[RMDB]
RNA sequence: GGGAACGACUCGAGUAGAGUCGAAAAUGUUUAACUUGAGAUCAGUGGCUCGAUGGUUGUCUGAUUAUGGCAUUCGCUAUACAGAUGAUGCAAAGAGGCCCAUAGAAGAGAGUGAGCCCUUUCAGGACGUUCUGUAAAGAUUCGUCUUUACAGAACGAAAAGAAACAACAACAACAAC
Reactivity to DMS in 0.01 (KOAc 150mM, MgCl2 10mM, bicine 150mM(pH8.5), 24C), signal-to-noise 9, nucleotides 027 to 126: u010g000u010u010u010a130a040c020u000u000g000a300g010a070u000c010a140g000u000g000g000c010u000c000g010a300u000g000g000u000u000g000u000c000u000g000a130u010u000a000u000g000g010c000a220u010u010c210g010c010u000a010u000a030c010a000g000a010u000g000a020u000g000c010a010a030a300g000a020g000g000c300c000c000a010u000a030g010a020a030g000a300g000a020g010u000g000a110g000c010c010c020u000u010u010c080a070g010g010a300
Reactivity to 2A3 in 0.01 (KOAc 150mM, MgCl2 10mM, bicine 150mM(pH8.5), 24C), signal-to-noise 4, nucleotides 027 to 126: u080g020u010u160u070a060a020c010u030u040g020a090g040a120u020c000a010g010u000g020g000c000u000c020g020a030u020g000g030u020u000g010u000c010u000g050a170u090u090a010u020g000g010c040a070u220u280c220g000c000u020a000u000a020c000a000g010a000u020g010a000u050g210c000a000a010a010g010a010g000g000c010c000c000a000u010a010g020a030a000g030a010g000a000g010u030g020a020g010c010c000c000u010u070u050c080a060g030g060a030